[RMDB]
RNA sequence: GGGAACGACUCGAGUAGAGUCGAAAAUUAAAGAGCGUAGCACUCACUCAGACUAAGUCUGACACACACAUACGCUAAUCAUCUCUGUGUGUGUUCGAGAUAUCGAUAAGUGUAUGAGAUGAAAAAACGUGAAUUAGAACUUCGGUUCUAAUUCACGAAAAGAAACAACAACAACAAC
Reactivity to DMS in 0.01 (KOAc 150mM, MgCl2 10mM, bicine 150mM(pH8.5), 24C), signal-to-noise 2, nucleotides 027 to 126: u010u010a050a150a150g020a170g030c010g010u000a020g020c040a010c020u000c030a080c280u000c010a010g000a030c050u010a090a060g000u000c010u000g010a040c000a090c030a020c000a000c000a050u000a010c030g020c000u000a090a120u000c020a010u010c010u000c000u020g010u000g020u000g020u000g010u000u010c070g000a020g000a170u030a110u000c010g020a020u010a020a020g020u000g020u000a060u000g000a010g010a010u000g030a000a040a030a050a100a060
Reactivity to 2A3 in 0.01 (KOAc 150mM, MgCl2 10mM, bicine 150mM(pH8.5), 24C), signal-to-noise 2, nucleotides 027 to 126: u210u100a140a080a040g170a020g020c010g000u020a000g010c010a000c010u010c000a000c020u020c010a000g020a030c030u260a300a040g060u000c000u000g000a000c000a000c000a000c000a000c000a020u000a020c010g000c040u120a110a100u020c000a010u020c000u000c010u010g000u000g000u000g000u010g000u020u000c000g000a000g030a100u180a070u180c040g000a020u000a050a000g000u000g010u010a040u060g000a020g040a010u070g000a160a000a000a000a000a000